[RMDB]
This 177-nucleotide RNA was probed chemically with DMS and 2A3.
RNA sequence: GGGAACGACUCGAGUAGAGUCGAAAACGCGUGGUGCAUGGCCGUUCUUAACACGUGGAGUGAUCUGUCUGGUCAAAUCUGAUAACGCGUGAGAGGUGAGUGGUUUUUAACCAGACGAUGUGUGUAAGCGUACUGAAUCAUUCGUGAUUCAGUACGCAAAAGAAACAACAACAACAAC
Reactivity to DMS in 0.01 (KOAc 150mM, MgCl2 10mM, bicine 150mM(pH8.5), 24C), signal-to-noise 3, nucleotides 027 to 126: c070g010c050g030u020g000g010u010g010c110a090u000g000g000c050c020g010u010u010c020u000u010a140a090c060a020c060g030u010g020g000a140g000u010g000a060u010c030u000g000u020c030u010g000g030u020c050a030a090a020u000c040u040g000a130u020a060a080c020g020c040g010u000g010a090g000a080g000g000u000g000a090g010u000g010g000u000u010u020u020u040a070a090c010c010a020g020a040c050g000a070u000g010u000g000u000g020u000a100a120
Reactivity to 2A3 in 0.01 (KOAc 150mM, MgCl2 10mM, bicine 150mM(pH8.5), 24C), signal-to-noise 4, nucleotides 027 to 126: c000g020c020g010u080g040g000u020g050c060a070u040g070g000c000c000g030u060u030c040u060u150a100a040c000a000c030g020u070g060g080a110g010u130g030a060u020c010u080g070u010c030u060g000g030u030c000a060a040a050u070c040u030g090a110u090a150a020c010g000c010g060u070g040a070g000a020g010g040u070g030a070g010u070g030g000u040u020u000u030u110a030a020c020c010a000g010a020c020g020a040u050g040u000g010u000g020u090a170a010
DMS adducts were read by reverse transcription with MarathonRT. Values cover nucleotides 27 to 126. For 2A3 the reverse transcriptase was SuperScript II with manganese.